[RMDB]
Overview
Chemical mapping of a 207-nucleotide RNA with DMS and 2A3. Values cover nucleotides 27 to 156. Source: RMDB library OK3TST, as collected in RNAgym. For 2A3, 1,196 sequencing reads were counted. For DMS the reverse transcriptase was MarathonRT. The reactions ran in a buffer of 150 mM KOAc, 10 mM MgCl2 and 150 mM bicine (pH 8.5), at 24 C. For 2A3 the reverse transcriptase was SuperScript II with manganese. For DMS, 3,359 sequencing reads were counted.
RNA sequence: GGGAACGACUCGAGUAGAGUCGAAAAUCGCAAUUAUCACGAAUCGCGCACCAGAGUCGCUAUAAGACGGCAUAAAUAAAUUAAAGUCUUCGGCAUAUCCAGAUUCAUCAAUAAUCAUAAUGCUGCUAUAUCCGAGGGCGCGAUGUAAUAACUCAGCUGAAGACUAUGAAUUCGUUCAUAGUCUUCAAAAAGAAACAACAACAACAAC
Reactivity to DMS in 0.01 (KOAc 150mM, MgCl2 10mM, bicine 150mM(pH8.5), 24C), signal-to-noise 2, nucleotides 027 to 156: u010c030g020c050a090a100u010u000a020u000c030a140c040g030a110a050u000c000g010c020g040c020a130c050c020a200g110a220g040u000c070g020c040u000a110u000a100a150g010a200c030g020g010c020a090u000a040a120a150u010a090a050a110u010u000a030a060a130g030u000c030u000u000c090g070g030c080a130u000a050u000c090c020a190g010a050u020u000c070a130u000c070a080a090u000a050a060u010c050a110u010a100a090u000g030c000u000g020c020u000a070u020a160u000c020c050g010a110g010g010g000c020g050c000g030a030u000g020u000a080a040u010a040a060c030u000c040a090g000c110
Reactivity to 2A3 in 0.01 (KOAc 150mM, MgCl2 10mM, bicine 150mM(pH8.5), 24C), signal-to-noise 2, nucleotides 027 to 156: u060c020g010c040a020a130u080u080a120u130c060a020c120g070a080a000u000c000g000c030g000c050a160c050c000a030g000a010g050u100c050g020c030u040a010u010a150a040g010a010c000g000g030c020a010u150a220a130a020u090a010a060a100u200u140a060a050a000g000u000c000u020u010c010g050g000c020a010u040a040u100c140c060a050g000a080u050u040c070a070u070c050a170a100u120a110a020u070c020a060u040a200a060u080g010c000u000g000c040u090a080u040a040u300c000c030g060a170g000g000g000c000g000c000g010a010u010g020u000a020a010u010a020a060c100u040c140a070g000c060